The record gives the reactivity of an RNA of 177 nucleotides to DMS and 2A3.

[RMDB]
RNA sequence: GGGAACGACUCGAGUAGAGUCGAAAAGUGCAAUGGCGAAACGAGAGGUAGAUCUGAAGCGUUCCAAGAUUAAGCUAGAGCGAGAGAAGAAGGUGGUCAAUGCUAGAACUGCCCGUGCUAAUGAGCAUAACCUUUGACAGUUCGCUGUCAAAGGUUAAAAAGAAACAACAACAACAAC
Reactivity to DMS in 0.01 (KOAc 150mM, MgCl2 10mM, bicine 150mM(pH8.5), 24C), signal-to-noise 3, nucleotides 027 to 126: g020u000g010c060a040a090u000g010g010c040g030a050a090a090c130g010a140g010a070g010g020u000a070g010a070u000c050u010g030a090a110g020c030g040u000u000c020c020a080a080g010a110u020u010a080a120g010c080u010a070g010a090g020c050g010a090g030a060g000a100a100g010a070a080g000g030u000g000g000u000c070a080a060u010g000c080u010a070g000a070a090c080u000g020c010c010c050g020u020g020c010u010a090a060u020g010a110g030c050a130
Reactivity to 2A3 in 0.01 (KOAc 150mM, MgCl2 10mM, bicine 150mM(pH8.5), 24C), signal-to-noise 1, nucleotides 027 to 126: g100u110g000c030a080a130u080g050g000c010g050a020a040a060c060g000a120g000a000g090g010u040a030g000a140u000c010u000g070a130a020g010c030g060u030u040c010c010a030a000g120a060u150u170a060a020g040c050u000a010g020a000g020c030g000a030g000a010g010a100a000g040a030a050g060g010u040g000g000u000c030a020a040u110g000c080u040a010g030a100a030c000u050g020c000c000c010g070u000g000c000u060a120a200u200g030a060g030c030a020
The 2A3 profile rests on 948 reads. DMS adducts were read by reverse transcription with MarathonRT. High 2A3 reactivity points to a flexible backbone, as in loops and unpaired stretches.